Source information:
Chemical mapping of a 177-nucleotide RNA with 2A3 and DMS. For 2A3 the reverse transcriptase was SuperScript II with manganese. The data come from the RNA Mapping Database (RMDB), library M2PK90. The RNA was probed in 150 mM KOAc, 10 mM MgCl2 and 150 mM bicine (pH 8.5) at 24 C.
RNA sequence: GGGAACGACUCGAGUAGAGUCGAAAAAGAAAGCAAGGCGAAGGGAAGCCACCACCGCGGGAGCUGUACGUUGUACGAGAGCUCAGCUUUUACCUUCCCAAACCGCCGAAAGGGAAAACCCAAAAAAUGUAUCAAUAUGUUUCGACAUAUUGAUACAAAAAGAAACAACAACAACAAC
Reactivity to 2A3 in 0.01 (KOAc 150mM, MgCl2 10mM, bicine 150mM(pH8.5), 24C), signal-to-noise 1, nucleotides 027 to 126: a000g060a050a010a010g070c030a020a110g010g000c010g040a040a040g040g000g000a010a000g010c040c010a060c040c000a040c040c050g010c040g060g170g000a000g000c010u040g000u040a040c050g130u090u270g070u160a020c020g010a040g030a000g290c000u000c020a000g000c000u040u010u020u050a030c000c020u030u040c000c000c000a030a040a030c030c000g030c000c000g020a070a000a010g000g010g020a040a020a040a100c000c000c000a120a010a000a000a010a010
Reactivity to DMS in 0.01 (KOAc 150mM, MgCl2 10mM, bicine 150mM(pH8.5), 24C), signal-to-noise 5, nucleotides 027 to 126: a080g010a070a070a120g020c060a140a140g010g010c020g020a140a200g010g000g000a070a030g000c100c060a140c130c060a060c190c100g010c010g020g000g000a020g020c010u010g010u000a020c020g010u000u010g020u000a080c010g000a120g010a050g010c000u000c000a130g010c010u000u010u000u000a130c190c060u000u010c000c000c000a030a100a100c140c010g020c010c040g010a010a050a090g010g000g010a070a050a090a130c010c000c010a000a020a060a070a060a080